[RMDB]
RNA sequence: GGGAACGACUCGAGUAGAGUCGAAAAAGAACAAUUGGAAAGAGAGAAGAGAAUGUGAAAAUCUUCGAUCUAGUGAAAGUCGAAGAACUGAAGACAGCACUUCCUGAUGGGAAAUCAGACCCUGACCACUCGAAAUAGAUUUCGAUCUAUUUCGAGUAAAAGAAACAACAACAACAAC
Reactivity to 2A3 in 0.01 (KOAc 150mM, MgCl2 10mM, bicine 150mM(pH8.5), 24C), signal-to-noise 3, nucleotides 027 to 126: a000g090a090a020c070a060a070u150u110g040g030a080a100a020g040a010g000a000g000a030a020g010a010g020a060a120u130g050u020g110a030a010a030a120u020c010u010u010c000g020a030u040c020u060a040g010u070g120a270a130a020g020u020c020g020a030a020g020a090a090c030u090g020a050a010g050a040c000a020g000c030a010c030u050u000c020c000u030g010a070u060g020g020g040a040a100a050u130c020a020g070a130c000c000c000u010g050a050c000c030
Reactivity to DMS in 0.01 (KOAc 150mM, MgCl2 10mM, bicine 150mM(pH8.5), 24C), signal-to-noise 5, nucleotides 027 to 126: a090g000a120a060c090a080a090u010u000g010g000a090a100a080g010a090g000a200g020a050a040g010a040g010a100a070u010g000u000g000a090a100a130a120u000c000u000u000c010g000a060u000c060u010a100g020u000g000a090a090a090g020u000c010g000a040a010g000a040a070c100u000g000a050a060g000a070c050a040g000c070a070c080u000u000c050c010u000g000a070u010g000g000g010a050a090a080u010c090a080g010a130c020c020c010u010g000a130c170c140